[RMDB]
RNA sequence: GGGAACGACUCGAGUAGAGUCGAAAAAGUGGCAAGCUGGCCUGGAAAGGUAAAAUCCAAAAUUGAAUAACAUUACGCCAGUCAAGAACUUGCUAGCCCAGGCGGAUUAUUCAUACACAAUGCAUGAAGAUUUAACAGACUUCGGUCUGUUAAAUCUAAAAGAAACAACAACAACAAC
Reactivity to DMS in 0.01 (KOAc 150mM, MgCl2 10mM, bicine 150mM(pH8.5), 24C), signal-to-noise 2, nucleotides 027 to 126: a100g050u000g000g000c010a030a050g020c040u020g010g010c040c140u000g000g020a040a190a050g050g020u000a040a050a100a090u010c050c060a030a030a090a180u020u010g000a050a030u020a070a070c160a100u000u020a170c040g000c000c000a050g020u010c080a070a060g000a090a060c020u000u000g010c020u000a110g010c020c010c030a120g020g000c030g000g010a150u000u000a020u000u010c040a030u000a090c150a060c210a040a040u020g000c100a090u000g000a160
Reactivity to 2A3 in 0.01 (KOAc 150mM, MgCl2 10mM, bicine 150mM(pH8.5), 24C), signal-to-noise 1, nucleotides 027 to 126: a000g150u110g000g000c010a020a030g000c000u060g060g000c000c030u020g060g050a090a160a010g050g040u160a090a070a000a070u080c070c010a000a050a050a120u110u090g040a060a050u090a080a020c050a090u040u210a050c050g010c000c000a010g000u060c050a070a020g040a010a170c010u010u020g010c010u000a010g000c010c000c050a000g000g030c030g000g000a010u030u000a010u060u110c060a040u110a090c070a010c020a170a130u200g000c040a090u040g060a040